[RMDB]
RNA sequence: GGGAACGACUCGAGUAGAGUCGAAAAAGCGGUGCGCUACGGCGCACCGCAACUGCUCGUAAUAAUCACACAUCUCUUCGUGGUGAGCAGCAGGCAACGAUCUUAUGAUUGGCUGAGAUGUGAAAAAAUCUUUCUAAAGCUUCGGCUUUAGAAAGAUAAAAGAAACAACAACAACAAC
Reactivity to 2A3 in 0.01 (KOAc 150mM, MgCl2 10mM, bicine 150mM(pH8.5), 24C), signal-to-noise 2, nucleotides 027 to 126: a000g000c020g090g000u030g000c040g020c000u050a080c300g140g000c000g000c000a010c000c000g000c000a000a010c000u000g000c020u000c050g100u120a110a130u160a190a090u290c010a030c000a000c000a080u000c010u020c000u050u050c060g020u050g000g040u080g000a000g000c010a000g010c020a010g080g030c070a080a080c050g030a040u010c050u050u300a180u300g020a030u050u000g000g030c000u000g010a020g000a000u000g000u010g100a180a000a000a000a000

Source: RMDB library RFM100, as collected in RNAgym. An RNA of 177 nucleotides, treated with 2A3 and read out base by base. Conditions: 150 mM KOAc, 10 mM MgCl2 and 150 mM bicine (pH 8.5), 24 C.